An RNA of 177 nucleotides, treated with 2A3 and DMS and read out base by base. The DMS profile rests on 1,227 reads.

[RMDB]
RNA sequence: GGGAACGACUCGAGUAGAGUCGAAAAGACGCCUGAUGGCGAACGUGCGCAAGAUAAGAAUGGUGGUAUAUACUGCCCAGAAUAACUAAUGGACGGCAGAGCGCACGGACCACCAAUGUCCACCAGACGCUAUGCUCAUCUUCGGAUGAGCAUAGCGAAAAGAAACAACAACAACAAC
Reactivity to 2A3 in 0.01 (KOAc 150mM, MgCl2 10mM, bicine 150mM(pH8.5), 24C), signal-to-noise 2, nucleotides 027 to 126: g030a000c030g040c000c050u180g300a270u300g000g020c000g000a010a020c040g030u030g000c000g010c000a070a100g020a120u210a130a040g090a080a130u130g000g000u020g020g000u050a040u000a000u000a160c020u050g000c000c000c020a040g050a150a100u230a050a010c130u110a000a150u070g000g060a020c030g000g000c010a000g000a000g050c000g000c000a000c000g020g000a000c010c010a010c000c000a080a100u100g000u040c010c030a000c000c000a000g020a000
Reactivity to DMS in 0.01 (KOAc 150mM, MgCl2 10mM, bicine 150mM(pH8.5), 24C), signal-to-noise 1, nucleotides 027 to 126: g050a130c000g020c000c000u000g040a050u070g180g070c030g000a050a090c000g030u000g000c000g000c000a230a130g000a130u060a110a060g000a120a000u000g060g000u060g000g060u050a020u020a060u000a120c060u000g000c000c020c050a140g000a000a110u060a150a120c290u000a100a100u000g000g000a270c060g000g000c050a000g000a180g000c000g000c000a000c010g000g000a010c010c060a080c110c050a140a000u070g040u000c000c140a020c000c000a110g000a300
High DMS reactivity at an A or C suggests that its Watson-Crick edge is free.